[RMDB]
An RNA of 177 nucleotides, treated with DMS and 2A3 and read out base by base. Values cover nucleotides 27 to 126. 2A3 is a SHAPE reagent: it acylates the 2'-hydroxyl of flexible nucleotides of all four kinds.

RNA sequence: GGGAACGACUCGAGUAGAGUCGAAAAUGCAGGGCUGUCUGCAGGCCACGGUGGCUGCUUUCUGGGCCACGGUGCACCAGGAGAACACGCGUGUCAUCGUCAUGACCACCAGGGAGAUGGAGCGGGGCUUAUCUACUACCUUCGGGUAGUAGAUAAGAAAAGAAACAACAACAACAAC
Reactivity to DMS in 0.01 (KOAc 150mM, MgCl2 10mM, bicine 150mM(pH8.5), 24C), signal-to-noise 9, nucleotides 027 to 126: u010g010c040a050g010g010g010c080u000g010u000c020u000g010c040a060g010g030c180c030a060c050g010g030u000g010g010c030u000g000c050u000u000u000c060u010g010g000g010c010c030a140c120g020g020u010g020c040a100c020c010a060g010g010a080g010a090a100c160a070c120g000c060g010u000g000u010c020a030u000c080g000u000c130a090u000g010a080c040c030a090c060c050a090g000g010g000a090g010a100u000g000g000a080g010c090g010g000g000g010
Reactivity to 2A3 in 0.01 (KOAc 150mM, MgCl2 10mM, bicine 150mM(pH8.5), 24C), signal-to-noise 7, nucleotides 027 to 126: u080g000c030a020g020g040g090c060u080g050u190c010u040g010c020a020g020g040c020c000a010c020g050g010u020g020g000c030u030g050c010u090u130u070c050u080g020g010g000c010c040a120c180g090g040u160g000c080a200c050c010a010g040g040a060g040a060a040c090a020c110g080c030g030u060g030u070c020a050u050c010g100u060c040a080u110g070a090c000c010a020c010c030a030g020g050g000a140g020a040u090g030g010a030g020c090g010g000g010g000